[RMDB]
RNA sequence: GGGAACGACUCGAGUAGAGUCGAAAAACUUUGUACGAAUGUCAGUGAAAUUGAAUUAAACAACGAAAAAUGCUUCAUGGCUUAACGGAGAUUUAUGAGGAAAACCGAACUUGAGGCCCACGUCAGUUUCCCCUCUGUAUUUCGAUACAGAGGGGAAAAAAGAAACAACAACAACAAC
Reactivity to DMS in 0.01 (KOAc 150mM, MgCl2 10mM, bicine 150mM(pH8.5), 24C), signal-to-noise 1, nucleotides 027 to 126: a100c130u000u000u000g040u010a040c120g000a060a070u040g010u010c080a030g040u030g030a080a020a030u000u070g010a070a130u030u000a060a010a130c170a020a060c110g000a000a030a100a070a050u010g000c080u010u050c000a020u000g000g000c050u000u020a120a010c030g000g010a080g010a060u000u000u010a040u000g000a040g000g000a040a050a030a040c000c000g000a160a040c040u000u000g000a000g000g000c000c020c030a020c130g000u000c080a100g000u020
Reactivity to 2A3 in 0.01 (KOAc 150mM, MgCl2 10mM, bicine 150mM(pH8.5), 24C), signal-to-noise 1, nucleotides 027 to 126: a000c020u000u020u180g000u010a080c000g130a020a010u130g050u030c000a010g120u100g070a080a000a150u300u000g060a050a070u050u020a090a010a080c220a080a000c050g100a080a020a020a020a020u150g010c060u000u000c040a000u010g110g000c100u130u010a030a050c000g120g000a080g000a070u260u190u000a070u170g090a100g040g020a000a200a000a000c020c000g040a080a080c010u030u050g000a000g000g000c000c030c020a010c000g000u010c030a030g000u020